[RMDB]
RNA sequence: GGGAACGACUCGAGUAGAGUCGAAAAAUCUGCAAUCUUACCUGUCCAAGGCGAAAGAGUUCAUCAUGCAGAUGAUACAUGAUUUAUCUGGAACAUAUGACCCUAAUCCUGAGAAUGAAUUAAGAACGCACUAAGGUAAGUUCGCUUACCUUAGUGCAAAAGAAACAACAACAACAAC
Reactivity to DMS in 0.01 (KOAc 150mM, MgCl2 10mM, bicine 150mM(pH8.5), 24C), signal-to-noise 4, nucleotides 027 to 126: a050u000c020u000g080c060a100a120u010c040u000u010a070c040c020u000g000u000c100c230a090a060g010g020c080g010a070a040a090g010a060g010u010u000c110a050u010c130a110u000g010c040a030g010a050u000g010a130u010a060c130a040u010g010a090u000u000u000a070u020c030u010g010g020a100a100c070a060u000a100u000g000a090c030c020c020u000a070a090u000c010c010u000g000a120g020a080a110u010g010a070a070u010u010a120a080g010a070a120c260
Reactivity to 2A3 in 0.01 (KOAc 150mM, MgCl2 10mM, bicine 150mM(pH8.5), 24C), signal-to-noise 3, nucleotides 027 to 126: a010u000c020u010g000c020a060a070u000c020u030u010a040c000c010u010g070u030c040c040a040a020g050g000c060g180a160a020a040g110a020g010u090u190c020a090u010c010a030u150g020c020a030g020a000u020g010a020u050a070c150a140u110g080a110u150u070u100a060u060c040u060g020g030a030a040c000a060u120a060u180g060a090c000c010c000u030a040a030u010c000c010u040g050a030g010a120a090u130g040a000a020u140u070a140a020g000a050a000c070
Notes
This 177-nucleotide RNA was probed chemically with DMS and 2A3. DMS adducts were read by reverse transcription with MarathonRT. Conditions: 150 mM KOAc, 10 mM MgCl2 and 150 mM bicine (pH 8.5), 24 C. It was measured as part of the RMDB library OK2TRN. For DMS, 2,793 sequencing reads were counted.